The record gives the reactivity of an RNA of 177 nucleotides to 2A3. Conditions: 150 mM KOAc, 10 mM MgCl2 and 150 mM bicine (pH 8.5), 24 C. For 2A3 the reverse transcriptase was SuperScript II with manganese. The 2A3 profile rests on 733 reads.

RNA sequence: GGGAACGACUCGAGUAGAGUCGAAAAAGUCCUUCGACCGACGGGCCAUGGCAUGCAGUUGCGCACGUGAGACACGGAGGCAACGACUGACAAGGCUUAUUCGCCAUCCUCCGGCAACAAGGGCACGCGUCUCUGCGGAGUUCGCUCCGCAGAGACGAAAAGAAACAACAACAACAAC
Reactivity to 2A3 in 0.01 (KOAc 150mM, MgCl2 10mM, bicine 150mM(pH8.5), 24C), signal-to-noise 2, nucleotides 027 to 126: a000g030u000c000c030u010u020c030g300a300c020c000g140a140c040g050g010g000c090c000a040u060g000g000c020a020u200g000c000a080g000u020u010g030c090g080c070a020c040g010u010g060a080g040a020c050a040c110g000g010a030g000g070c000a020a050c000g000a000c000u080g000a030c040a030a030g040g000c010u040u120a120u060u100c010g010c000c010a100u110c020c020u050c030c010g000g040c000a040a000c010a070a020g000g020g000c020a080c030g060